[RMDB]
RNA sequence: GGGAACGACUCGAGUAGAGUCGAAAAUGGCGAGUCCGUCGACGAGGUAAUCAAGGAGGUACUGGCGGUCACUAAUUGGGGCGAGCUAGACCUCCUGGUGGUCGACACGCCGCCGGGCCUCCGCGACCUGAUAUAAUUGGUUCGCCAAUUAUAUCAGAAAAGAAACAACAACAACAAC
Reactivity to DMS in 0.01 (KOAc 150mM, MgCl2 10mM, bicine 150mM(pH8.5), 24C), signal-to-noise 9, nucleotides 027 to 126: u010g010g010c010g000a110g010u010c120c170g010u000c020g010a070c050g010a140g020g010u010a110a070u000c050a130a180g010g000a020g010g010u000a080c010u000g010g010c000g010g010u000c040a040c050u010a090a180u010u000g010g010g010g000c030g010a140g020c040u000a040g000a090c040c010u000c020c040u000g000g020u000g000g010u000c040g000a060c080a060c170g000c040c000g000c020c010g000g000g000c050c020u000c030c020g010c160g000a070c160
Reactivity to 2A3 in 0.01 (KOAc 150mM, MgCl2 10mM, bicine 150mM(pH8.5), 24C), signal-to-noise 9, nucleotides 027 to 126: u120g030g010c020g010a040g080u050c060c050g020u020c020g010a030c020g040a070g100g140u170a080a070u100c070a080a060g020g010a000g020g030u150a300c010u010g010g000c010g020g000u050c020a030c110u190a280a300u240u180g020g000g000g010c020g020a090g040c020u030a030g040a090c010c000u000c000c000u010g000g020u050g020g020u050c020g020a030c000a000c060g020c010c000g000c000c000g000g020g000c010c010u060c030c020g030c020g040a050c010